RNA sequence: GGGAACGACUCGAGUAGAGUCGAAAAAAUGCUCAUUGCUAGCCCGGAGCACUGCAAGAACAUAAAUUUGUACAACAGAGGAGAGAUCUUUGCCAGACCCACUGAGUCCUUUGAAUUCAUUGACCGCACUCUUACACGUUUUCGAACGUGUAAGAGUAAAAGAAACAACAACAACAAC
Reactivity to 2A3 in 0.01 (KOAc 150mM, MgCl2 10mM, bicine 150mM(pH8.5), 24C), signal-to-noise 2, nucleotides 027 to 126: a000a020u140g000c030u030c040a160u090u100g000c010u070a030g000c000c030c000g060g010a030g000c030a030c070u040g010c010a040a050g020a100a030c010a030u160a090a130a110u130u130u100g040u060a060c050a080a010c000a070g020a060g070g000a000g010a000g020a060u000c010u010u110u080g030c000c010a010g020a060c000c020c000a010c020u030g020a030g070u020c010c020u030u060u120g060a090a030u170u050c040a100u040u070g070a030c020c010g020c040
Reactivity to DMS in 0.01 (KOAc 150mM, MgCl2 10mM, bicine 150mM(pH8.5), 24C), signal-to-noise 3, nucleotides 027 to 126: a070a050u000g010c040u000c040a130u030u010g000c020u010a080g020c020c010c060g020g020a050g010c040a110c080u000g000c030a040a080g000a070a060c060a060u000a060a080a160u000u000u010g010u010a090c110a040a070c090a100g000a090g010g000a110g010a110g010a050u010c020u000u010u000g000c040c040a070g010a090c090c030c030a060c100u000g010a120g020u010c010c030u000u000u000g000a060a070u000u000c040a080u000u010g000a120c050c070g030c200
Record summary: Chemical mapping of a 177-nucleotide RNA with 2A3 and DMS. It was measured as part of the RMDB library OK2TST. Conditions: 150 mM KOAc, 10 mM MgCl2 and 150 mM bicine (pH 8.5), 24 C. For 2A3, 1,485 sequencing reads were counted.